[RMDB]
RNA sequence: GGGAACGACUCGAGUAGAGUCGAAAAACGCAUACAUUGAUUACGCAAGUUUAUAGUGCAAUGGUUGCUGCUAAUUUGAAAAUCACUUUAAUGGAACGAUAUCCUGAUGAUUACCCUGUUCAAAUUGCGUGCGGUAUCUCUUCGGAGAUACCGCACGAAAAGAAACAACAACAACAAC
Reactivity to 2A3 in 0.01 (KOAc 150mM, MgCl2 10mM, bicine 150mM(pH8.5), 24C), signal-to-noise 1, nucleotides 027 to 126: a000c000g000c000a000u000a070c000a020u110u000g000a000u170u160a000c000g000c000a010a010g000u050u300u050a300u250a190g300u210g000c000a000a000u020g040g040u000u110g000c000u000g120c040u040a050a050u000u000u030g000a020a020a020a020u000c000a000c090u000u250u200a110a230u180g000g000a000a000c000g180a110u000a140u160c040c000u000g000a090u070g000a040u120u000a000c000c000c000u000g100u050u110c120a040a040a040u040u300g000